[RMDB]
Source: RMDB library OK3TST, as collected in RNAgym. Chemical mapping of a 207-nucleotide RNA with 2A3 and DMS. The DMS profile rests on 3,710 reads. Conditions: 150 mM KOAc, 10 mM MgCl2 and 150 mM bicine (pH 8.5), 24 C.

RNA sequence: GGGAACGACUCGAGUAGAGUCGAAAAGGAGUGGUAAGACCACCAAGGGGACAGUGGUAAAACUGUGCACCCCAGGAACUGUCUUUGGAUCACCUACCUGCUUUAUGUGACUUUUUCUACCUACCUCUCUGUACUUCAUUUCCAGACACUGAAGACAAUAAAUCACGAGUUUCGACUCGUGAUUUAUAAAAGAAACAACAACAACAAC
Reactivity to 2A3 in 0.01 (KOAc 150mM, MgCl2 10mM, bicine 150mM(pH8.5), 24C), signal-to-noise 4, nucleotides 027 to 156: g080g030a070g000u050g020g030u060a090a020g050a040c010c010a020c020c010a080a140g000g000g020g010a060c010a010g000u030g050g090u230a110a110a040a040c010u010g010u040g040c060a140c000c000c000c000a020g060g010a060a080c080u060g020u030c000u060u130u060g090g010a070u060c030a030c010c000u050a060c020c000u050g070c030u120u160u050a110u200g070u070g030a080c020u050u060u030u090u020c030u050a090c000c020u060a050c010c010u040c000u000c020u030g050u120a160c010u020u070c020a060u030u050u050c040c030a030g020a030c020a010c070u040g060a040a000g040a040c040a050
Reactivity to DMS in 0.01 (KOAc 150mM, MgCl2 10mM, bicine 150mM(pH8.5), 24C), signal-to-noise 2, nucleotides 027 to 156: g020g030a100g040u020g020g010u010a060a080g000a200c060c070a100c040c010a110a150g000g020g020g030a090c040a040g020u010g010g010u000a070a080a090a050c040u000g020u000g010c040a160c010c010c010c000a140g020g000a050a060c050u000g010u000c020u000u010u010g040g010a050u000c010a070c010c040u020a140c060c020u010g020c070u000u000u000a090u000g020u010g000a090c070u000u000u000u000u000c040u020a100c060c020u000a070c020c000u000c010u000c020u010g020u000a070c030u010u000c010a120u020u000u000c020c040a180g000a080c040a070c130u000g000a060a060g020a120c030a150